[RMDB]
The data come from the RNA Mapping Database (RMDB), library OK2TRN. Chemical mapping of a 177-nucleotide RNA with DMS and 2A3. The reactions ran in a buffer of 150 mM KOAc, 10 mM MgCl2 and 150 mM bicine (pH 8.5), at 24 C.

RNA sequence: GGGAACGACUCGAGUAGAGUCGAAAAACUCCACCACGUCAGCUGGUGCGAGAGCCAGCACCUCCAGGAAGCCUUCUCUGAUCUUGUCCCUGGGAUCCCUACGGCACUCGUCCUGGGCCUUUUUGGGCCACUGUCUUAGCUUCGGCUAAGACAGUGGAAAAGAAACAACAACAACAAC
Reactivity to DMS in 0.01 (KOAc 150mM, MgCl2 10mM, bicine 150mM(pH8.5), 24C), signal-to-noise 2, nucleotides 027 to 126: a130c050u000c010c020a070c020c010a070c050g030u030c140a120g020c080u010g000g020u000g010c100g000a150g000a090g030c040c020a080g020c030a190c060c030u010c030c030a040g010g010a110a150g010c030c030u000u000c060u000c080u000g010a070u010c040u010u000g010u000c030c020c010u020g000g000g000a060u000c040c050c020u000a100c150g010g020c030a080c100u000c090g000u000c010c020u000g010g010g000c010c050u000u000u000u010u000g000g020g010
Reactivity to 2A3 in 0.01 (KOAc 150mM, MgCl2 10mM, bicine 150mM(pH8.5), 24C), signal-to-noise 1, nucleotides 027 to 126: a000c030u030c000c000a020c050c000a050c040g150u120c030a000g000c060u040g000g080u000g050c090g020a170g000a000g030c000c000a020g010c010a020c000c040u000c010c000a030g060g040a080a030g040c000c010u120u040c030u060c040u020g110a080u070c010u040u090g030u100c000c020c020u000g010g030g000a060u080c000c000c000u050a040c050g020g030c030a010c060u120c040g050u040c000c010u020g010g000g050c000c030u150u220u040u150u170g060g020g000